[RMDB]
RNA sequence: GGGAACGACUCGAGUAGAGUCGAAAAUCAACUCACAGAUAUCGAUAGUAGUGACAUCAUGUUGAGUGGAGUACACGACACAGAAUGUCGUGAACGUUAUCGAACGGUGACAUGACAUGAUGUGGAAUCCGUGCUGGACCUUCGGGUCUAGCACGGAAAAAGAAACAACAACAACAAC
Reactivity to 2A3 in 0.01 (KOAc 150mM, MgCl2 10mM, bicine 150mM(pH8.5), 24C), signal-to-noise 5, nucleotides 027 to 126: u050c000a000a060c020u020c000a020c010a010g090a110u130a090u210c070g080a070u060a120g240u100a020g020u140g180a020c000a000u070c010a090u070g070u080u070g140a100g020u040g020g010a020g020u070a030c060a010c060g100a010c020a010c010a040g140a190a030u040g000u000c000g000u000g000a010a000c010g000u000u030a200u300c110g090a010a040c020g000g110u130g140a090c010a040u090g000a000c000a000u010g000a020u000g030u020g030g070a040a060
Reactivity to DMS in 0.01 (KOAc 150mM, MgCl2 10mM, bicine 150mM(pH8.5), 24C), signal-to-noise 2, nucleotides 027 to 126: u020c100a060a070c040u000c030a010c010a000g000a050u000a110u000c050g030a080u010a100g000u020a050g020u040g010a040c090a000u000c000a040u000g030u010u020g000a110g000u000g020g040a050g030u000a080c090a110c020g010a220c040a010c060a070g000a260a080u000g000u000c010g000u070g000a060a060c010g000u000u000a160u020c250g040a020a020c020g000g030u020g050a110c030a070u030g000a010c000a010u000g000a120u000g010u000g000g000a050a020